RNA sequence: GGGAACGACUCGAGUAGAGUCGAAAAUGUCGCCUUUCUUCCAAUAGUAUUUGCGCUACUUUUUCUAUGCUUAGUCGAUUAUCUUCAUACCUUCUCCAAAGGGCAAGCAUACCGAGAGCAGGAACCAUGAAUAACGGGGAUUCGUCCCCGUUAUUCAAAAAGAAACAACAACAACAAC
Reactivity to DMS in 0.01 (KOAc 150mM, MgCl2 10mM, bicine 150mM(pH8.5), 24C), signal-to-noise 2, nucleotides 027 to 126: u000g000u000c070g010c030c030u010u000u000c040u010u020c040c100a060a040u000a070g020u010a050u010u010u000g000c040g020c080u010a050c120u000u000u000u000u010c030u000a060u010g000c020u000u010a070g010u000c010g010a120u010u000a060u000c050u010u010c080a070u000a260c030c030u000u000c060u010c080c110a040a030a080g000g000g000c050a050a050g000c060a060u000a070c060c070g020a080g020a060g020c030a050g000g020a050a090c110c080a120